[RMDB]
RNA sequence: GGGAACGACUCGAGUAGAGUCGAAAACACAUGCCAUCAUAUCGGUUAAGAACUCUUAACUCUGAUGGCUUUCGAGUUAUGUCGUGCAUUGAAGCUCUCCCUUCAAUUCAACGUACCGUUCCGUCAACUGUUCUAAGUCGUUCGCGACUUAGAACAGAAAAGAAACAACAACAACAAC
Reactivity to DMS in 0.01 (KOAc 150mM, MgCl2 10mM, bicine 150mM(pH8.5), 24C), signal-to-noise 3, nucleotides 027 to 126: c120a100c070a180u000g010c000c000a030u000c010a060u020a110u010c300g000g000u000u000a010a000g000a170a210c300u000c010u000u000a010a020c010u010c080u000g010a020u010g010g020c000u010u000u010c010g000a040g010u000u010a090u000g010u000c010g010u000g010c220a040u000u000g000a030a000g000c190u000c110u000c150c250c000u000u000c020a030a030u000u000c030a110a010c000g010u000a030c050c030g020u000u000c000c000g000u000c070a080a120
Reactivity to 2A3 in 0.01 (KOAc 150mM, MgCl2 10mM, bicine 150mM(pH8.5), 24C), signal-to-noise 1, nucleotides 027 to 126: c050a010c020a050u140g010c010c000a000u010c010a010u030a070u250c060g010g000u010u030a010a060g060a230a220c050u000c000u300u000a000a000c000u000c020u070g020a010u020g010g000c040u000u040u010c010g000a010g000u110u090a130u170g030u020c020g010u020g030c030a010u000u000g030a050a000g000c020u020c010u040c010c000c000u010u020c010a020a050u040u010c060a130a080c030g020u070a010c030c000g000u000u020c010c020g090u060c040a090a090

Structure probing data (DMS and 2A3) for a 177-nucleotide construct. DMS adducts were read by reverse transcription with MarathonRT. The reactions ran in a buffer of 150 mM KOAc, 10 mM MgCl2 and 150 mM bicine (pH 8.5), at 24 C. For 2A3 the reverse transcriptase was SuperScript II with manganese.